[RMDB]
RNA sequence: GGGAACGACUCGAGUAGAGUCGAAAAAACCCAGACCAUCAUCUAAGGUCCCUAAAUCUAUGCUAAGUUGAUCAAACGUGGUUUGAUUGCUUUGACAGCUAGGAUGUUAGCUUGGAAGCAGCUAUUCCGACUAAAGCUGAUUCGUCAGCUUUAGUCGAAAAGAAACAACAACAACAAC
Reactivity to 2A3 in 0.01 (KOAc 150mM, MgCl2 10mM, bicine 150mM(pH8.5), 24C), signal-to-noise 6, nucleotides 027 to 126: a000a000c010c000c010a000g010a010c000c010a040u160c000a020u020c030u080a140a080g040g010u010c030c000c000u100a110a090a010u070c040u070a060u170g030c010u030a030a030g080u240u190g250a030u010c000a000a010a040c120g300u250g020g070u110u010u000g010a010u010u000g010c030u040u040u080g120a130c030a020g010c050u070a040g040g050a040u080g050u140u070a010g000c000u020u030g040g000a040a010g050c020a000g000c050u030a070u120u030c030
Reactivity to DMS in 0.01 (KOAc 150mM, MgCl2 10mM, bicine 150mM(pH8.5), 24C), signal-to-noise 5, nucleotides 027 to 126: a080a050c020c000c000a110g020a070c110c030a080u010c100a070u000c070u020a090a090g000g000u000c010c040c030u000a040a090a080u000c050u010a120u000g010c010u010a020a020g020u010u040g010a010u010c000a010a010a010c010g030u020g030g000u010u000u000g000a010u010u000g000c020u010u000u010g000a130c180a030g020c050u000a160g010g000a060u000g000u020u000a020g000c020u010u020g010g010a170a100g010c100a040g010c030u010a080u020u010c070
The data come from the RNA Mapping Database (RMDB), libraries RFM100 and RFMREP. Structure probing data (2A3 and DMS) for a 177-nucleotide construct. Reactivities are given for positions 27 through 126. The RNA was probed in 150 mM KOAc, 10 mM MgCl2 and 150 mM bicine (pH 8.5) at 24 C.